[RMDB]
Description: This 207-nucleotide RNA was probed chemically with 2A3. For 2A3 the reverse transcriptase was SuperScript II with manganese. For 2A3, 669 sequencing reads were counted. High 2A3 reactivity points to a flexible backbone, as in loops and unpaired stretches.
RNA sequence: GGGAACGACUCGAGUAGAGUCGAAAAUCGAAGUCUCAGCUCUCUUCAGGAAGUCAGGAGACUAGUCCUCUAGCUAGUCCUGAUCGAAGAGAGCUCUUCCUGAGAAGCUGAGACUAGUCAGGAAGCUAGUCGAAGCUGAAGUCCUCUGAGAAGCUGACGUGAUUAGGGUGUUCGCACCCUAAUCACGAAAAGAAACAACAACAACAAC
Reactivity to 2A3 in 0.01 (KOAc 150mM, MgCl2 10mM, bicine 150mM(pH8.5), 24C), signal-to-noise 1, nucleotides 027 to 156: u070c020g030a080a010g040u020c000u010c110a010g000c000u010c010u000c000u040u060c040a110g020g200a300a010g090u020c000a000g010g060a120g090a080c030u030a000g040u080c090c120u200c150u130a010g030c020u000a000g030u020c000c010u000g010a010u150c040g010a000a010g010a000g000a000g010c000u000c000u000u000c000c000u000g030a050g000a120a000g010c010u000g000a020g000a010c000u000a000g020u080c040a030g060g220a230a000g040c020u040a000g000u030c000g000a000a000g000c010u000g030a020a000g040u050c020c000u000c030u080g060a120g000a140a070g080c160u050g010a030